[RMDB]
RNA sequence: GGGAACGACUCGAGUAGAGUCGAAAAGAUAUGGAGCGUGACAGGGAGCUGUCCACAUCGGAAACGAUGUGGCAGCGAGGAUCUGUACGCUCCUAAGUCAAAGACAAUAUGGUUCGCCAUAUUGUCACUUAAUCGUUACCUUCGGGUAACGAUUAAGAAAAGAAACAACAACAACAAC
Reactivity to 2A3 in 0.01 (KOAc 150mM, MgCl2 10mM, bicine 150mM(pH8.5), 24C), signal-to-noise 4, nucleotides 027 to 126: g030a000u080a030u190g000g000a000g030c010g010u100g300a070c010a010g010g020g010a050g030c010u020g100u300c040c000a000c000a000u020c010g020g020a060a050a050c010g000a010u000g010u000g010g000c000a000g020c010g000a020g000g000a010u000c010u010g000u000a000c000g010c000u000c000c000u000a000a000g010u000c030a060a050a080g020a000c010a000a000u000a010u010g080g070u050u120c300g060c150c000a000u000a000u010u020g000u000c010a000
Reactivity to DMS in 0.01 (KOAc 150mM, MgCl2 10mM, bicine 150mM(pH8.5), 24C), signal-to-noise 4, nucleotides 027 to 126: g010a040u010a300u010g000g010a020g020c000g010u000g020a020c010a010g000g000g010a040g010c010u010g000u030c000c000a000c000a010u000c000g010g010a160a080a230c010g000a000u000g010u000g000g000c000a010g030c010g010a040g010g000a030u000c000u000g000u000a020c000g020c000u010c000c000u000a000a060g010u000c050a120a150a120g010a010c000a010a010u000a010u000g000g010u000u000c300g030c010c000a010u010a010u000u000g010u000c000a060
Overview:
Conditions: 150 mM KOAc, 10 mM MgCl2 and 150 mM bicine (pH 8.5), 24 C. Chemical mapping of a 177-nucleotide RNA with 2A3 and DMS. The DMS profile rests on 7,164 reads. Reactivities are given for positions 27 through 126. For 2A3 the reverse transcriptase was SuperScript II with manganese.